[RMDB]
RNA sequence: GGGAACGACUCGAGUAGAGUCGAAAAAUUCCUUUGAUGUUUCCCAGCCAGGGAUUUUCGACCUCAAGUUUCUUGAUCUUCUUCUUUGUCUUCCGGAGCUCCGCCUCGAGUUCCUCCGCUUUCUUUCCGAGCAAGAUGUUCGCAUCUUGCAAAAGAAACAACAACAACAAC
Reactivity to DMS in 0.01 (KOAc 150mM, MgCl2 10mM, bicine 150mM(pH8.5), 24C), signal-to-noise 6, nucleotides 027 to 129: a080u010u010c020c040u020u050u050g010a050u040g000u000u010u010c020c020c040a090g030c060c060a080g000g010g020a020u000u000u000u000c070g000a040c040c040u060c090a070a080g000u000u050u000c020u030u000g030a120u010c000u030u010c030u040u020c060u030u020u030g040u020c050u000u000c000c000g000g010a170g040c070u020c050c070g030c080c030u020c010g020a090g010u010u010c070c020u000c030c060g000c070u010u020u010c010u000u000u000c060c060g040a190
Reactivity to 2A3 in 0.01 (KOAc 150mM, MgCl2 10mM, bicine 150mM(pH8.5), 24C), signal-to-noise 9, nucleotides 027 to 129: a000u060u040c010c000u050u030u150g080a060u040g040u010u040u030c000c000c000a000g060c050c030a030g010g010g020a020u030u020u010u040c040g030a040c010c020u050c060a080a090g040u040u070u030c000u030u070g080a140u030c020u060u000c000u050u020c000u050u110u100g080u040c020u080u010c030c000g020g010a020g010c010u010c030c020g050c010c000u010c020g020a010g010u020u010c000c010u010c010c000g030c040u050u100u020c010u020u030u010c040c040g030a020
Annotation: Conditions: 150 mM KOAc, 10 mM MgCl2 and 150 mM bicine (pH 8.5), 24 C. The record gives the reactivity of an RNA of 170 nucleotides to DMS and 2A3. For 2A3, 40,582 sequencing reads were counted. Source: RMDB library 15KLIB, as collected in RNAgym.